[RMDB]
Source: RMDB library OK2TRN, as collected in RNAgym. The record gives the reactivity of an RNA of 177 nucleotides to DMS and 2A3. Values cover nucleotides 27 to 126. The reactions ran in a buffer of 150 mM KOAc, 10 mM MgCl2 and 150 mM bicine (pH 8.5), at 24 C. DMS adducts were read by reverse transcription with MarathonRT.
RNA sequence: GGGAACGACUCGAGUAGAGUCGAAAAGGACGAGUAGAACCCAACGCGUGCAUCACGAAAUGGGAACAACUCGUAGGCGUGUUGUUCGCAUUUCGGAGAGAUCUGCGUUGCGAAAGGUACGCCAUGACUAGUCCGAAGUAUUCGUACUUUGGACUAGAAAAGAAACAACAACAACAAC
Reactivity to DMS in 0.01 (KOAc 150mM, MgCl2 10mM, bicine 150mM(pH8.5), 24C), signal-to-noise 9, nucleotides 027 to 126: g010g010a070c040g010a110g020u000a080g010a100a170c070c090c000a020a030c000g010c000g010u000g010c300a090u000c010a080c010g000a010a010a020u000g000g000g010a010a030c010a010a010c000u000c010g010u010a100g010g020c100g010u000g000u000u000g000u000u000c000g000c000a000u000u000u000c000g000g000a090g000a090g000a060u000c030u000g010c010g000u000u000g010c120g000a040a090a060g000g010u000a050c040g010c020c050a090u000g000a220
Reactivity to 2A3 in 0.01 (KOAc 150mM, MgCl2 10mM, bicine 150mM(pH8.5), 24C), signal-to-noise 9, nucleotides 027 to 126: g040g010a020c030g010a020g040u070a020g040a070a040c000c020c010a000a000c000g010c010g020u020g000c040a040u010c010a010c020g010a000a000a010u040g010g050g000a000a000c000a000a000c000u010c020g030u050a150g090g220c120g000u010g000u000u010g000u000u000c050g020c120a000u000u000u010c000g000g010a100g000a000g000a030u020c010u050g000c000g000u000u020g000c010g030a090a020a000g040g010u030a020c020g010c010c010a070u080g050a040
Background:
For 2A3 the reverse transcriptase was SuperScript II with manganese.